[RMDB]
RNA sequence: GGGAACGACUCGAGUAGAGUCGAAAAACUUACUACAAACUGAUCUUAUUUGAAUUGAGGGUUACUGUAGCUACUACUGUAGCUACCGUAAUCCUCACAGUGUGAACUUAAAUUAAAGACUGAAGCUUUGCUCAGAAUGAUUCGUCAUUCUGAGCAAAAAAGAAACAACAACAACAAC
Reactivity to 2A3 in 0.01 (KOAc 150mM, MgCl2 10mM, bicine 150mM(pH8.5), 24C), signal-to-noise 3, nucleotides 027 to 126: a000c070u130u140a060c060u090a080c020a120a140a070c030u080g050a170u080c020u040u140a190u230u190u210g190a300a220u110u040g000a020g010g010g000u000u000a000c000u000g000u000a000g030c000u000a000c010u000a050c070u090g000u000a000g020c000u000a000c000c000g000u000a000a000u000c000c000u010c000a000c000a000g010u070g020u040g150a100a040c010u070u160a110a000a090u050u040a000a070a000g100a000c050u090g090a050a000g040c010u000
Reactivity to DMS in 0.01 (KOAc 150mM, MgCl2 10mM, bicine 150mM(pH8.5), 24C), signal-to-noise 1, nucleotides 027 to 126: a050c090u010u050a160c070u000a200c110a030a080a230c040u010g010a070u000c050u000u000a070u070u000u000g030a090a070u000u010g000a000g000g000g000u000u060a000c000u000g020u000a000g000c000u000a000c000u050a220c300u000g000u000a000g000c020u000a010c010c050g010u000a000a000u000c000c000u020c000a000c050a020g000u000g010u060g020a090a200c180u020u010a040a010a080u050u030a030a110a010g000a070c100u040g020a050a060g000c040u050